An RNA of 207 nucleotides, treated with DMS and 2A3 and read out base by base.
[RMDB]
RNA sequence: GGGAACGACUCGAGUAGAGUCGAAAAAACGUUGCAUGAUCGUAAAACAUGCCCGGCUUACCGUGAGCCGCCUUUGAAAGAAAGGUUUACACGGACUCUGUUACGUUACGCACGUACCUAACUUGUGAAAACGGCAUCUUGUUCGCAAGAUGCCGAAUCUAAGAUGUUUCUUCGGAAACAUCUUAGAAAAAGAAACAACAACAACAAC
Reactivity to DMS in 0.01 (KOAc 150mM, MgCl2 10mM, bicine 150mM(pH8.5), 24C), signal-to-noise 1, nucleotides 027 to 156: a090a090c050g020u010u000g010c000a060u000g000a050u010c010g000u000a060a050a050a030c010a020u000g030c030c000c040g050g000c030u000u000a060c030c140g070u000g020a030g040c020c020g000c000c010u020u000u030g000a250a110a190g020a080a040a000g000g060u000u010u000a140c060a110c010g000g020a140c070u000c080u000g000u010u000a040c010g000u010u020a050c100g010c040a080c060g010u000a090c020c040u000a060a080c100u000u010g020u010g000a060a070a100a180c000g010g000c020a030u010c010u000u000g030u000u000c300g060c000a010a000g000a030u000g030c000c000g000a000a040
Reactivity to 2A3 in 0.01 (KOAc 150mM, MgCl2 10mM, bicine 150mM(pH8.5), 24C), signal-to-noise 6, nucleotides 027 to 156: a000a000c000g000u000u000g000c000a000u010g010a040u180c040g060u190a040a120a020a000c000a010u010g000c000c000c000g000g000c000u020u060a100c010c000g010u000g000a010g000c000c000g010c000c000u030u010u010g080a110a050a010g020a000a010a000g020g000u020u030u050a020c000a000c010g030g010a030c050u090c040u120g060u110u030a010c020g010u010u030a060c160g040c050a020c050g020u030a020c010c020u080a090a120c050u120u130g050u050g170a070a080a040a040c000g000g010c000a000u000c000u010u020g020u090u070c170g020c080a000a000g000a000u000g000c000c000g000a000a000
The RNA was probed in 150 mM KOAc, 10 mM MgCl2 and 150 mM bicine (pH 8.5) at 24 C. It was measured as part of the RMDB library M2RFOK.